[RMDB]
RNA sequence: GGGAACGACUCGAGUAGAGUCGAAAAGUAAAACAGAGUAAUCGUCUGGUUAUUAAGACACGCUAACACGGAACAGGUGCAAAAUCGCUGUAGUUUGAUUACACUCCUGUUAAUCCAUACAGCAACAAUAAUGCAUACGGUUCGCCGUAUGCAUUAUAAAAGAAACAACAACAACAAC
Reactivity to 2A3 in 0.01 (KOAc 150mM, MgCl2 10mM, bicine 150mM(pH8.5), 24C), signal-to-noise 9, nucleotides 027 to 126: g140u120a000a070a060a040c040a010g040a010g060u110a080a130u100c050g060u020c070u050g050g070u110u060a130u110u190a130a040g060a040c030a010c090g040c020u050a090a000c020a000c080g040g010a070a020c030a050g030g040u060g020c040a040a070a050a130u150c070g000c020u050g040u040a090g060u050u060u160g010a020u010u020a020c050a010c060u130c040c000u020g020u060u070a020a020u030c010c000a020u030a060c010a010g040c020a030a020c030a070
Reactivity to DMS in 0.01 (KOAc 150mM, MgCl2 10mM, bicine 150mM(pH8.5), 24C), signal-to-noise 7, nucleotides 027 to 126: g010u020a060a070a100a130c030a030g000a060g000u010a080a090u020c130g010u000c030u000g000g000u000u010a050u020u020a060a070g010a070c090a070c050g010c020u010a050a080c120a060c060g000g000a070a040c030a060g010g000u010g020c100a090a050a040a060u020c110g020c010u000g010u000a040g000u040u010u020g000a020u010u000a030c110a140c140u020c110c080u020g010u010u010a040a030u010c030c220a130u020a030c050a000g010c030a070a070c210a070
Annotation:
Conditions: 150 mM KOAc, 10 mM MgCl2 and 150 mM bicine (pH 8.5), 24 C. Structure probing data (2A3 and DMS) for a 177-nucleotide construct. The data come from the RNA Mapping Database (RMDB), library OK1LIB. Reactivities are given for positions 27 through 126.